This 177-nucleotide RNA was probed chemically with DMS and 2A3. For 2A3 the reverse transcriptase was SuperScript II with manganese.

RNA sequence: GGGAACGACUCGAGUAGAGUCGAAAAACAUUGGGAGCCUCGACCACGGUGUCGAUGACCAGGAACUUGCGGUCGGGAUACUGUUUCGCCACCUCGGCCACGGCGUUCUGGAAGAGGAAGCCCGGCGGCAUUCGUCACAAUUCGUUGUGACGAAUGCAAAAGAAACAACAACAACAAC
Reactivity to DMS in 0.01 (KOAc 150mM, MgCl2 10mM, bicine 150mM(pH8.5), 24C), signal-to-noise 1, nucleotides 027 to 126: a070c050a100u000u010g010g010g020a140g000c020c040u000c030g020a290c000c030a120c150g010g010u010g000u000c000g030a080u000g010a040c010c010a050g000g020a100a050c190u020u030g020c090g000g010u000c010g000g030g000a090u010a080c130u020g020u000u000u000c080g060c040c200a070c070c020u000c070g000g020c010c050a060c050g040g030c030g010u000u000c230u000g000g040a090a190g020a030g000g010a020a110g000c040c000c030g000g010c150g000
Reactivity to 2A3 in 0.01 (KOAc 150mM, MgCl2 10mM, bicine 150mM(pH8.5), 24C), signal-to-noise 1, nucleotides 027 to 126: a010c010a040u120u090g020g000g000a090g090c020c000u000c000g010a000c000c000a060c070g040g000u070g040u050c010g170a300u080g020a010c000c020a010g070g030a020a130c100u130u250g070c150g020g010u050c000g000g050g000a060u080a110c020u040g130u050u100u060c000g000c000c000a030c010c030u050c110g090g000c010c000a030c000g030g000c030g020u060u030c020u050g010g000a000a010g010a000g040g030a000a040g000c050c020c030g050g000c120g040
For 2A3, 1,281 sequencing reads were counted.